[RMDB]
RNA sequence: GGGAACGACUCGAGUAGAGUCGAAAAUGGAAUCAUGAUGCUGUGGGCGGCAUAGCGUAAUAGCCGACCAUCACGGGGAUCUUGUCAGGUCGGCAGGUAUAGCCAGCACGGGCCGAAAGUAGGCGCUCUUCUUAAGAUGUUUCGACAUCUUAAGAAGAAAAGAAACAACAACAACAAC
Reactivity to DMS in 0.01 (KOAc 150mM, MgCl2 10mM, bicine 150mM(pH8.5), 24C), signal-to-noise 7, nucleotides 027 to 126: u010g000g010a090a070u010c080a040u000g010a090u010g010c020u010g030u000g000g000g020c030g000g010c050a070u010a070g010c070g000u020a070a100u020a120g010c000c000g000a020c010c010a070u020c140a030c090g000g010g000g010a080u020c040u020u010g010u000c170a100g010g000u010c020g000g010c010a010g010g010u000a070u010a110g020c030c030a070g010c070a050c070g000g010g000c020c010g000a070a040a060g020u020a080g000g000c070g000c100u010
Reactivity to 2A3 in 0.01 (KOAc 150mM, MgCl2 10mM, bicine 150mM(pH8.5), 24C), signal-to-noise 9, nucleotides 027 to 126: u100g030g040a040a040u110c050a060u100g060a040u070g040c030u030g010u060g040g030g030c030g000g010c040a050u050a040g060c040g040u090a080a050u050a150g000c010c000g020a040c000c010a030u070c030a020c040g050g000g020g040a040u050c030u100u110g060u080c060a040g000g020u010c000g000g000c010a000g000g010u070a040u070a100g020c020c010a010g000c020a020c040g020g040g000c010c010g040a070a040a030g070u080a050g050g000c010g010c020u000